[RMDB]
RNA sequence: GGGAACGACUCGAGUAGAGUCGAAAAACUGCCAUACGUGGCAGAAACACGCCUUACCAGGACUAAACAGCGUGUCUAAAAAACAGUCCUUCAUACCUGAUCUGGAGGGUAGAUCAGGAAUACUAAAAUCUAUUGUAUGCUUCGGCAUACAAUAGAUAAAAGAAACAACAACAACAAC
Reactivity to DMS in 0.01 (KOAc 150mM, MgCl2 10mM, bicine 150mM(pH8.5), 24C), signal-to-noise 5, nucleotides 027 to 126: a130c000u000g010c010c000a040u000a070c190g030u000g010g020c000a000g000a100a150a010c000a000c010g000c000c010u000u020a010c070c110a050g000g000a020c010u000a050a000a020c030a010g000c000g000u000g010u000c130u010a000a010a000a100a000a000c180a020g000u000c000c000u000u050c200a080u000a090c000c000u000g010a010u000c000u000g000g010a110g020g030g010u020a020g010a010u000c000a010g000g000a070a050u020a090c140u030a050a050a080
Reactivity to 2A3 in 0.01 (KOAc 150mM, MgCl2 10mM, bicine 150mM(pH8.5), 24C), signal-to-noise 9, nucleotides 027 to 126: a000c010u000g000c010c000a040u050a100c250g090u050g000g000c000a000g000a010a010a000c000a000c000g010c000c000u030u060a030c030c070a010g000g000a000c000u050a120a040a000c020a010g000c000g010u000g040u060c120u070a020a020a010a010a000a000c050a000g010u000c030c000u030u110c090a120u090a160c000c000u000g000a010u000c010u020g080g080a140g110g130g060u090a010g010a000u000c000a000g020g050a010a040u180a040c070u080a050a090a060